The record gives the reactivity of an RNA of 207 nucleotides to 2A3.
Values cover nucleotides 27 to 156.
The RNA was probed in 150 mM KOAc, 10 mM MgCl2 and 150 mM bicine (pH 8.5) at 24 C.
2A3 adducts were read by reverse transcription with SuperScript II with manganese.
RNA sequence: GGGAACGACUCGAGUAGAGUCGAAAAGCUGCGUGAAACCUCGCUGUUUUUUUGGCUAACUUUCAGCGAGGUGAGGCAAGGCGGCAAAAAAAAGUUGGGAGCAGCAACGGCAAGCAAAAAAAAAGUUACAAGUUGCGAUGGUUCGCCAUCGCAACAACUGAUAUAUUGGCUUCGGCCAAUAUAUCAGAAAAGAAACAACAACAACAAC
Reactivity to 2A3 in 0.01 (KOAc 150mM, MgCl2 10mM, bicine 150mM(pH8.5), 24C), signal-to-noise 1, nucleotides 027 to 156: g010c010u020g010c010g090u100g030a020a050a080c000c000u010c020g000c010u000g000u000u000u000u030u020u030u060g140g000c120u020a010a000c010u020u010u000c000a000g000c000g000a000g000g010u000g000a000g000g030c030a050a010g090g000c060g000g010c040a110a050a030a000a000a000a000a060g060u100u090g030g040g000a070g010c000a000g000c040a060a030c000g040g000c020a020a040g020c050a080a010a010a020a000a000a000a000a050g010u020u010a020c020a080a040g000u000u000g000c000g000a000u000g000g080u020u060c180g020c100c000a000u000c000g000c000a000a000c000a000a000